The record gives the reactivity of an RNA of 177 nucleotides to 2A3 and DMS. Source: RMDB library RFM100, as collected in RNAgym. Values cover nucleotides 27 to 126. 2A3 adducts were read by reverse transcription with SuperScript II with manganese.
RNA sequence: GGGAACGACUCGAGUAGAGUCGAAAAAACAUCGAAAGAUGAGUACAUUCAACGUAUACCUACUAAUGUAGUUAAUGAAGGAUAAGGGAUUCCUCCUAAUAAGUCCUACGAAUCAGAGGCUUUCGUUAGGAAUACUUCGAUUCGUCGAAGUAUUCCUAAAAGAAACAACAACAACAAC
Reactivity to 2A3 in 0.01 (KOAc 150mM, MgCl2 10mM, bicine 150mM(pH8.5), 24C), signal-to-noise 2, nucleotides 027 to 126: a000a000c020a010u000c000g070a080a090a040g000a000u010g030a030g110u050a070c040a050u050u130c110a100a000c050g030u090a000u040a110c060c010u020a040c000u090a130a180u180g050u060a020g060u060u100a040a100u110g050a020a000g040g040a020u030a080a080g030g010g000a010u120u000c050c040u070c010c000u080a160a130u140a240a020g020u000c020c000u010a040c130g080a000a050u100c020a110g030a040g110g000c040u000u000u010c010g000u000u000
Reactivity to DMS in 0.01 (KOAc 150mM, MgCl2 10mM, bicine 150mM(pH8.5), 24C), signal-to-noise 1, nucleotides 027 to 126: a060a030c000a010u010c060g000a070a080a070g000a000u000g000a050g000u040a130c090a090u030u000c000a070a130c070g100u000a180u100a230c230c000u040a010c040u000a010a070u050g000u000a000g000u000u000a000a080u030g070a100a300g000g000a010u000a080a070g000g030g000a090u060u060c100c000u000c000c050u040a020a100u010a020a070g000u000c000c010u020a160c000g000a140a010u000c220a010g010a070g010g000c010u040u000u000c000g000u000u000